RNA sequence: GGGAACGACUCGAGUAGAGUCGAAAAUCUCAUCCAUUACAAACGCCCUUUGCCAGUUCCGUCUGGUGAAGUGUGUGGAAGUCAAGUUCCGUCUUGUCUGAAACCUGUAACUGUGCCCAAUGGCUAGCCAUCUACAGUCAUUCGUGACUGUAGAUGGAAAAGAAACAACAACAACAAC
Reactivity to DMS in 0.01 (KOAc 150mM, MgCl2 10mM, bicine 150mM(pH8.5), 24C), signal-to-noise 6, nucleotides 027 to 126: u000c010u010c020a140u020c070c050a100u020u020a050c120a070a100a160c030g000c010c020c000u000u000u000g000c000c010a010g000u010u040c280c130g000u040c000u010g000g020u000g000a020a010g010u000g000u000g000u000g020g000a110a030g000u020c060a030a040g010u010u030c100c070g010u010c020u000u000g000u000c010u000g000a110a060a110c130c060u000g010u010a040a060c090u010g010u000g010c030c020c080a060a080u030g010g030c080u010a080g000
Reactivity to 2A3 in 0.01 (KOAc 150mM, MgCl2 10mM, bicine 150mM(pH8.5), 24C), signal-to-noise 9, nucleotides 027 to 126: u020c020u010c020a060u040c030c020a060u110u110a090c060a050a120a010c020g010c000c010c000u010u000u010g000c010c000a010g020u170u280c060c090g130u140c100u000g000g000u010g000a000a000g000u010g010u010g000u010g040g040a060a020g030u030c020a040a010g020u080u190c040c020g060u070c080u020u040g030u000c020u030g050a090a050a060c010c020u020g020u060a050a060c040u060g060u100g060c000c020c020a090a070u090g040g010c030u020a020g050

Source information
Conditions: 150 mM KOAc, 10 mM MgCl2 and 150 mM bicine (pH 8.5), 24 C. Chemical mapping of a 177-nucleotide RNA with DMS and 2A3. Reactivities are given for positions 27 through 126. High DMS reactivity at an A or C suggests that its Watson-Crick edge is free. DMS adducts were read by reverse transcription with MarathonRT.